[RMDB]
The data come from the RNA Mapping Database (RMDB), library M2PK50.
An RNA of 177 nucleotides, treated with 2A3 and DMS and read out base by base.
DMS adducts were read by reverse transcription with MarathonRT.
For DMS, 6,734 sequencing reads were counted.
The reactions ran in a buffer of 150 mM KOAc, 10 mM MgCl2 and 150 mM bicine (pH 8.5), at 24 C.
RNA sequence: GGGAACGACUCGAGUAGAGUCGAAAAGGGUGAUCGUUCGCGAUCACCCAAAGAACCACGAAACGCCAAGAAAUCCCGGAACAUUGGUAUGGAAGCCUGAGAAAACUGACAAGUUCGCUUGUCAGAAGUAUUACUGUAGGUUCGCCUACAGUAAUACAAAAGAAACAACAACAACAAC
Reactivity to 2A3 in 0.01 (KOAc 150mM, MgCl2 10mM, bicine 150mM(pH8.5), 24C), signal-to-noise 4, nucleotides 027 to 126: g000g000g000u000g000a000u000c010g010u090u050c170g000c000g130a000u000c000a000c000c000c000a000a020a000g000a000a020c020c000a010c010g020a070a110a000c060g010c030c010a050a000g060a060a140a040u030c020c020c000g030g010a080a040c060a120u060u110g010g010u080a100u100g000g030a070a020g010c010c010u060g010a060g040a090a100a030a060c000u010g000a000c000a010a010g010u040u080c170g070c070u010u010g000u010c000a000g000a010a000
Reactivity to DMS in 0.01 (KOAc 150mM, MgCl2 10mM, bicine 150mM(pH8.5), 24C), signal-to-noise 6, nucleotides 027 to 126: g000g020g010u010g000a010u000c000g030u000u000c220g020c010g020a020u000c000a020c000c000c000a010a030a050g000a170a150c030c010a080c130g010a080a090a060c090g010c040c030a040a060g000a070a140a120u000c020c000c010g010g010a070a070c090a100u010u000g000g010u000a070u000g010g010a090a120g010c030c020u000g000a110g000a080a110a100a120c000u000g000a020c000a010a000g010u010u010c210g020c020u000u000g010u000c000a010g010a020a070